[RMDB]
RNA sequence: GGGAACGACUCGAGUAGAGUCGAAAAGCUGCCUCUGACGUCCUUCUCCCCCGGAAACGGGGCCGAAGGGUGGUAAAGCGUGUCGCCUGGCGCUCGCACGGGUAUGCGUGGUGGUCGACCCUGGCCGGAGUAUGGUAGGAUUCGUCCUACCAUACUCAAAAGAAACAACAACAACAAC
Reactivity to DMS in 0.01 (KOAc 150mM, MgCl2 10mM, bicine 150mM(pH8.5), 24C), signal-to-noise 5, nucleotides 027 to 126: g010c040u000g010c010c020u010c110u010g020a090c040g010u000c000c010u000u010c000u010c300c000c000c000c010g000g000a080a080a200c010g030g000g010g030c030c050g000a020a010g000g020g010u000g010g000u010a060a090a110g000c030g010u000g010u010c060g020c020c050u010g020g000c050g010c070u000c090g000c060a080c100g000g010g010u000a030u010g010c030g030u010g020g010u010g000g000u000c020g010a120c020c010c020u000g000g020c030c030g010
Reactivity to 2A3 in 0.01 (KOAc 150mM, MgCl2 10mM, bicine 150mM(pH8.5), 24C), signal-to-noise 4, nucleotides 027 to 126: g020c010u020g020c000c000u050c080u080g050a040c020g020u010c000c000u010u000c010u060c000c010c010c000c010g000g000a000a020a010c010g000g000g000g000c000c010g000a010a000g020g000g010u030g000g040u110a080a060a040g030c010g010u030g050u100c060g030c050c090u060g070g010c030g010c040u060c060g020c020a110c050g040g000g030u080a050u210g020c050g000u050g030g070u070g010g020u030c030g070a150c030c000c010u030g060g010c020c050g050